[RMDB]
Structure probing data (2A3 and DMS) for a 177-nucleotide construct. For 2A3 the reverse transcriptase was SuperScript II with manganese. The 2A3 profile rests on 5,848 reads. DMS adducts were read by reverse transcription with MarathonRT. The data come from the RNA Mapping Database (RMDB), library TTRDES. Reactivities are given for positions 27 through 126. The DMS profile rests on 4,325 reads.

RNA sequence: GGGAACGACUCGAGUAGAGUCGAAAAGAUAUGGAGAACCUGGAGCAACAGCUACCCAUCGGAAACGAUGGCGUAGACAUGCUCCUGGUUCUCCUAAGUCAAAGGCCUAUUGUUCGCAAUAGGCCAAUCGAACCUAAUUGUUCGCAAUUAGGUUCGAAAAAGAAACAACAACAACAAC
Reactivity to 2A3 in 0.01 (KOAc 150mM, MgCl2 10mM, bicine 150mM(pH8.5), 24C), signal-to-noise 2, nucleotides 027 to 126: g000a000u010a010u080g000g000a000g020a000a020c020c020u020g020g010a010g010c120a070a140c100a220g000c020u010a000c000c010c000a010u010c010g010g000a020a010a010c010g000a010u000g020g000c070g000u000a000g000a010c010a060u300g000c000u000c000c000u000g000g010u010u000c000u000c000c000u000a000a000g000u000c000a030a070a020g000g000c000c000u000a000u000u010g070u030u120c300g010c260a000a000u000a000g000g000c010c020a000a000
Reactivity to DMS in 0.01 (KOAc 150mM, MgCl2 10mM, bicine 150mM(pH8.5), 24C), signal-to-noise 4, nucleotides 027 to 126: g010a010u000a150u020g000g010a020g020a010a010c010c000u000g010g000a020g050c000a110a050c300a140g000c000u000a010c000c000c000a000u000c010g030g010a040a040a030c000g010a010u010g000g000c300g000u000a000g000a010c050a300u010g010c010u000c000c010u000g010g000u000u000c000u010c010c010u000a000a030g000u010c010a080a140a160g000g010c010c000u010a010u000u000g010u000u030c220g040c000a010a010u000a000g000g030c000c010a000a010